RNA sequence: GGGAACGACUCGAGUAGAGUCGAAAAGAUAUGGAACGUACGACUUCGAGGAUCUAUACGGUCGGAAACGACCGAUAGGGAGAAGGUACGUUCCUAAGUCAAAGUUCUGCGGUUCGCCGCAGAACAACUCUCUCGUAAAGUUCGCUUUACGAGAGAGAAAAGAAACAACAACAACAAC
Reactivity to DMS in 0.01 (KOAc 150mM, MgCl2 10mM, bicine 150mM(pH8.5), 24C), signal-to-noise 2, nucleotides 027 to 126: g000a010u000a000u020g000g000a020a010c000g000u000a000c000g010a180c020u000u000c010g000a080g000g000a020u010c000u010a010u010a200c000g000g000u000c000g030g010a000a000a010c010g020a010c020c000g010a000u000a000g000g010g010a000g020a030a010g010g010u000a010c000g010u000u000c000c000u010a000a060g000u000c010a100a120a150g010u000u000c000u000g020c010g020g010u000u030c300g040c000c000g020c010a010g010a010a000c010a110a090
Reactivity to 2A3 in 0.01 (KOAc 150mM, MgCl2 10mM, bicine 150mM(pH8.5), 24C), signal-to-noise 3, nucleotides 027 to 126: g000a000u000a000u060g000g010a010a010c010g020u020a000c020g300a300c230u010u010c010g090a300g040g010a000u000c010u010a010u030a160c010g000g000u010c010g010g000a010a010a010c000g010a010c010c000g000a000u010a010g000g020g010a040g000a000a000g000g010u000a000c000g000u000u000c000c000u010a000a000g000u000c000a080a000a110g010u000u000c000u010g010c000g010g050u060u100c300g040c130c000g000c010a000g000a000a000c010a000a000

Chemical mapping of a 177-nucleotide RNA with DMS and 2A3. The 2A3 profile rests on 10,778 reads. Source: RMDB library TTRDES, as collected in RNAgym.